This 177-nucleotide RNA was probed chemically with DMS and 2A3. Reactivities are rounded to 0.1 and cut off at 0 and 3.
RNA sequence: GGGAACGACUCGAGUAGAGUCGAAAAGAAAGAAAGAAAGAAGUGAAUGAUGAUGCGUGUAUUCUGCAAUGCUGACCUGUCUGACGAGAAGCAAUACUACUACUAUGACUAUUGGCAUCUGACACAAGUUAAGUUUUUCUUUCGAGAAAAACUUAACAAAAGAAACAACAACAACAAC
Reactivity to DMS in 0.01 (KOAc 150mM, MgCl2 10mM, bicine 150mM(pH8.5), 24C), signal-to-noise 8, nucleotides 027 to 126: g010a070a080a070g000a050a050a080g010a050a050a050g000a100a080g030u010g000a090a060u010g000a090u010g010a030u000g000c040g020u000g020u000a040u010u010c040u010g000c060a070a060u010g010c030u000g000a060c090c060u010g020u000c020u000g010a100c240g010a040g010a100a060g010c060a050a070u010a120c070u010a050c060u010a050c070u000a060u010g010a050c070u010a090u010u000g000g010c030a030u000c040u010g000a100c090a040c150a050a100
Reactivity to 2A3 in 0.01 (KOAc 150mM, MgCl2 10mM, bicine 150mM(pH8.5), 24C), signal-to-noise 9, nucleotides 027 to 126: g070a010a050a000g070a020a070a010g090a030a060a010g090a080a020g060u080g090a120a100u090g050a050u040g020a030u060g020c050g020u060g010u040a110u040u040c020u030g020c030a030a060u070g010c010u020g030a080c020c030u060g040u080c030u040g040a040c050g020a020g030a090a010g040c010a030a050u040a110c050u020a030c010u020a030c020u040a040u170g040a030c010u030a040u100u040g020g000c010a030u020c050u060g060a010c010a000c010a160a010